[RMDB]
Structure probing data (2A3 and DMS) for a 177-nucleotide construct.
RNA sequence: GGGAACGACUCGAGUAGAGUCGAAAAAUAAAUUCCGGAAGGUAUGCACGGACCUAGUUGGCAACCUAAGUAUAAUUGAAAAUUAUUCACACAAUGACCUACAGAACGUGGAUUACAUGAUCACCCACUCAGUAGUUCACUUCGGUGAACUACUGAGAAAAGAAACAACAACAACAAC
Reactivity to 2A3 in 0.01 (KOAc 150mM, MgCl2 10mM, bicine 150mM(pH8.5), 24C), signal-to-noise 4, nucleotides 027 to 126: a000u120a020a070a020u100u000c020c000g010g060a110a030g050g020u050a040u050g060c030a020c060g000g030a020c000c030u020a080g030u060u090g050g000c000a020a060c020c070u060a030a070g100u080a060u040a130a050u060u080g180a040a070a010a080u080u050a060u140u080c020a030c000a020c020a200a140u120g080a180c000c050u100a040c000a020g140a080a040c060g000u020g030g020a080u050u040a030c040a070u110g020a100u100c050a070c060c030c000a030
Reactivity to DMS in 0.01 (KOAc 150mM, MgCl2 10mM, bicine 150mM(pH8.5), 24C), signal-to-noise 2, nucleotides 027 to 126: a040u000a010a010a110u040u000c000c030g010g000a040a060g000g000u040a030u000g040c000a080c000g000g010a030c090c000u020a100g030u030u000g000g010c060a060a110c050c100u000a050a040g040u000a020u010a030a000u010u030g000a120a110a150a040u050u030a000u020u060c040a080c090a090c150a170a000u000g000a190c080c000u000a030c040a080g010a090a000c280g010u000g030g000a000u010u040a000c100a030u010g000a030u020c150a080c080c050c000a270

Record summary:
The RNA was probed in 150 mM KOAc, 10 mM MgCl2 and 150 mM bicine (pH 8.5) at 24 C. Reactivities are given for positions 27 through 126. For DMS the reverse transcriptase was MarathonRT.